This 177-nucleotide RNA was probed chemically with 2A3 and DMS. The RNA was probed in 150 mM KOAc, 10 mM MgCl2 and 150 mM bicine (pH 8.5) at 24 C. For 2A3, 2,465 sequencing reads were counted.
RNA sequence: GGGAACGACUCGAGUAGAGUCGAAAAGUCUAGCGAAGGGAUCCCACCCGGGAGACACGCAAGUCGCGAAUUACGCCGACCGGCCAAGGUCAAUCGCAGAACUCAACUGCAUGAGUAAGCUAGACGAAAUUUAUCGUCGAUUCGUCGACGAUAAAUUAAAAGAAACAACAACAACAAC
Reactivity to 2A3 in 0.01 (KOAc 150mM, MgCl2 10mM, bicine 150mM(pH8.5), 24C), signal-to-noise 2, nucleotides 027 to 126: g000u000c000u010a010g000c010g120a210a120g010g020g020a030u010c030c010c020a090c000c030c020g000g010g000a110g000a010c050a010c040g020c010a020a020g020u020c000g000c020g060a200a240u260u110a090c040g050c080c030g010a010c000c010g030g010c020c000a120a040g020g000u020c000a010a050u060c060g000c000a030g020a130a100c060u090c240a070a130c030u050g020c030a060u160g020a020g100u000a020a000g010c000u000a000g020a000c000g020a050
Reactivity to DMS in 0.01 (KOAc 150mM, MgCl2 10mM, bicine 150mM(pH8.5), 24C), signal-to-noise 3, nucleotides 027 to 126: g010u000c010u000a000g000c000g000a250a080g000g010g000a080u000c020c000c000a300c190c020c010g020g050g010a300g000a030c050a050c110g000c040a060a040g010u020c020g020c030g000a180a170u010u020a110c040g010c070c050g010a050c030c300g000g010c010c060a070a140g000g000u000c020a050a100u010c100g030c040a080g030a060a100c110u010c170a070a040c040u000g000c030a130u000g010a120g000u000a070a150g000c000u000a010g000a030c010g000a070
Source: RMDB library OK2TRN, as collected in RNAgym. DMS adducts were read by reverse transcription with MarathonRT. Values cover nucleotides 27 to 126. In probing experiments dimethyl sulfate is read out at A N1 and C N3, which are open when not base-paired.